[RMDB]
RNA sequence: GGGAACGACUCGAGUAGAGUCGAAAAAGAAAAGCGGAGGAGGGUUAUGGAUUCCGCUAAGUCCGCCCGCGCGUGGUGUGGGCUGGAAUUCGUGAAUGGAGGAUAAUUAAUGCCGCGCGCCCAAAAACAUUGAUUAGUAGUUCGCUACUAAUCAAUGAAAAGAAACAACAACAACAAC
Reactivity to DMS in 0.01 (KOAc 150mM, MgCl2 10mM, bicine 150mM(pH8.5), 24C), signal-to-noise 5, nucleotides 027 to 126: a080g000a090a070a110a120g030c050g010g000a050g010g010a150g010g010g000u000u000a030u010g000g020a170u000u000c000c000g020c110u010a040a060g000u010c000c020g000c020c010c020g000c110g010c090g020u010g000g020u000g030u010g000g010g000c030u000g010g010a070a060u000u000c060g010u010g000a090a080u010g000g000a080g010g000a140u000a050a080u010u000a060a120u010g000c010c010g010c020g010c080g000c010c080c050a030a050a060a070a100
Reactivity to 2A3 in 0.01 (KOAc 150mM, MgCl2 10mM, bicine 150mM(pH8.5), 24C), signal-to-noise 3, nucleotides 027 to 126: a000g060a010a100a000a020g040c030g010g030a030g070g080a070g060g110g020u140u150a040u170g060g020a020u040u000c010c000g020c030u010a040a010g030u000c010c000g010c020c020c000g030c010g010c030g080u130g040g020u060g010u040g030g040g000c030u020g000g000a020a030u050u030c060g010u060g120a140a070u130g040g040a030g040g000a020u030a120a040u190u090a110a040u090g000c000c000g000c000g000c020g000c020c010c000a040a100a000a000a010